Description
The record gives the reactivity of an RNA of 177 nucleotides to DMS and 2A3. The reactions ran in a buffer of 150 mM KOAc, 10 mM MgCl2 and 150 mM bicine (pH 8.5), at 24 C. For DMS, 2,337 sequencing reads were counted. For DMS the reverse transcriptase was MarathonRT.
[RMDB]
RNA sequence: GGGAACGACUCGAGUAGAGUCGAAAAAAAGAUAUGGACGAAUGAACUACAAGAAUGUAGGCCAACAGCUGCCUUCGGAAACGAAGGCAGACAUGGCUAUUAUAGCUUGCAUUCGUCCUAAGUCAAACAGUAUAAAGCACUUCGGUGCUUUAUACUGAAAAGAAACAACAACAACAAC
Reactivity to DMS in 0.01 (KOAc 150mM, MgCl2 10mM, bicine 150mM(pH8.5), 24C), signal-to-noise 3, nucleotides 027 to 126: a070a060a120g010a060u000a300u010g000g000a030c020g010a030a010u010g000a120a040c070u020a300c020a020a000g000a060a090u000g000u000a150g020g010c040c020a070a080c270a170g010c000u050g000c000c010u000u000c000g000g000a110a090a160c000g020a040a010g000g020c000a000g000a020c070a060u010g010g000c000u000a080u000u000a040u000a080g000c020u000u000g000c000a000u000u000c010g010u000c000c000u000a020a060g000u000c000a160a120a250
Reactivity to 2A3 in 0.01 (KOAc 150mM, MgCl2 10mM, bicine 150mM(pH8.5), 24C), signal-to-noise 2, nucleotides 027 to 126: a000a020a030g100a030u040a010u140g000g000a020c000g030a000a010u040g010a110a090c130u220a070c300a040a010g050a200a030u170g040u060a050g030g140c020c000a110a070c110a170g030c010u020g010c010c020u000u000c020g000g000a030a020a030c020g000a000a040g020g000c000a000g000a000c000a020u030g010g000c000u000a040u050u200a030u040a050g120c000u000u030g000c010a000u000u010c000g000u020c000c000u020a030a000g040u000c010a060a140a150